[RMDB]
RNA sequence: GGGAACGACUCGAGUAGAGUCGAAAAGUCAUGUAACUACUGUGGAAAAUCCAGAUGUAGAAGGUGGAUAUAUUCACACAAUCAGACCAACCAGAGCAGGAGAACAACUACCGAGUUUUACAGCUCAGAACCAUAACGCUUUGUUAAACUGGACUCGGAGCACACUUAGAUUCGUCUAAGUGUGCUCAAAAGAAACAACAACAACAAC
Reactivity to DMS in 0.01 (KOAc 150mM, MgCl2 10mM, bicine 150mM(pH8.5), 24C), signal-to-noise 1, nucleotides 027 to 156: g000u010c060a100u000g010u010a120a150c050u010a150c080u000g070u000g030g000a060a100a140a100u000c020c050a060g000a080u000g020u000a120g010a070a110g020g070u000g030g000a080u000a110u000a070u000u000c070a120c050a050c110a050a090u000c050a100g010a090c010c040a050a130c070c020a010g020a080g000c040a100g000g000a140g020a060a110c030a050a040c050u020a140c060c000g000a050g000u020u000u000u000a210c020a010g000c010u000c020a030g000a060a060c080c030a080u000a050a080c070g000c050u000u000u000g010u010u000a090a040a080c120u000g010g000a110c030u010c040g020
Reactivity to 2A3 in 0.01 (KOAc 150mM, MgCl2 10mM, bicine 150mM(pH8.5), 24C), signal-to-noise 3, nucleotides 027 to 156: g000u010c030a040u110g020u110a060a040c080u100a020c040u070g000u030g060g000a070a130a050a000u030c020c020a040g020a190u120g070u140a080g030a170a080g110g040u040g000g010a010u030a010u020a030u120u070c020a020c010a010c040a140a110u140c030a040g090a070c000c010a050a020c010c000a020g010a010g030c030a030g000g110a090g060a090a020c100a050a030c030u040a050c030c030g010a000g000u000u020u080u070a040c030a020g010c030u030c070a030g030a070a040c030c020a070u080a080a060c040g020c070u050u110u110g020u050u090a060a040a030c040u030g060g000a020c000u040c060g020
Conditions: 150 mM KOAc, 10 mM MgCl2 and 150 mM bicine (pH 8.5), 24 C. Structure probing data (DMS and 2A3) for a 207-nucleotide construct. DMS adducts were read by reverse transcription with MarathonRT. It was measured as part of the RMDB library OK3TST. The 2A3 profile rests on 1,361 reads.